[RMDB]
Structure probing data (2A3) for a 177-nucleotide construct.
The 2A3 profile rests on 758 reads.
The reactions ran in a buffer of 150 mM KOAc, 10 mM MgCl2 and 150 mM bicine (pH 8.5), at 24 C.
Reactivities are rounded to 0.1 and cut off at 0 and 3.
2A3 adducts were read by reverse transcription with SuperScript II with manganese.

RNA sequence: GGGAACGACUCGAGUAGAGUCGAAAAGAGACUUCACAAUGGUUUGAUAACCAUGUGUAGGAUGCUGAUUUGAGCCUCUCCCAAUUCUCUAGUAGCCUCACUGGGCCAGGCAGCACUCAAUAUACCUGAACGAGAGGUCAUUCGUGACCUCUCGUUCAAAAGAAACAACAACAACAAC
Reactivity to 2A3 in 0.01 (KOAc 150mM, MgCl2 10mM, bicine 150mM(pH8.5), 24C), signal-to-noise 2, nucleotides 027 to 126: g060a000g010a020c000u000u000c000a000c000a120a300u060g000g150u050u020u160g300a250u300a070a000c000c000a010u020g000u010g000u010a000g040g070a020u180g000c010u030g000a300u090u010u120g050a040g000c020c000u030c000u000c000c000c000a020a120u160u020c020u000c030u050a030g040u100a010g040c000c000u070c060a050c050u090g050g000g000c030c000a000g000g060c030a030g000c000a010c000u020c040a160a000u080a050u040a230c000c000u030